[RMDB]
RNA sequence: GGGAACGACUCGAGUAGAGUCGAAAAGGGGUCGACCCGAUGAAAGAGCUGACAUGCGUUCAUACUGAAGCCUCCACGGUAUGACGCAACAGCAGCUCUGGAGGGUCGACGGAGGCACCCAAACGUAAACGAGGAGGUUCGCCUCCUCGUUUACGAAGCCGAAUAUUAGGUUCGCCUAAUAUUCGGCAAAAGAAACAACAACAACAAC
Reactivity to 2A3 in 0.01 (KOAc 150mM, MgCl2 10mM, bicine 150mM(pH8.5), 24C), signal-to-noise 1, nucleotides 027 to 156: g130g000g040g030u020c000g000a000c010c010c000g010a050u020g000a000a020a020g000a000g000c010u000g060a260c050a210u140g040c030g050u140u180c020a000u010a000c000u040g030a160a030g000c000c020u050c010c000a000c010g020g000u000a020u010g000a000c000g040c000a040a010c070a010g020c000a000g000c000u020c010u000g000g010a010g000g020g000u000c000g000a000c000g010g000a000g000g000c000a000c000c000c010a060a070a040c010g010u000a000a000a000c000g000a000g020g000a000g040g000u030u130c140g040c000c000u000c000c000u000c000g000u000u000u000a000c000g000a010a020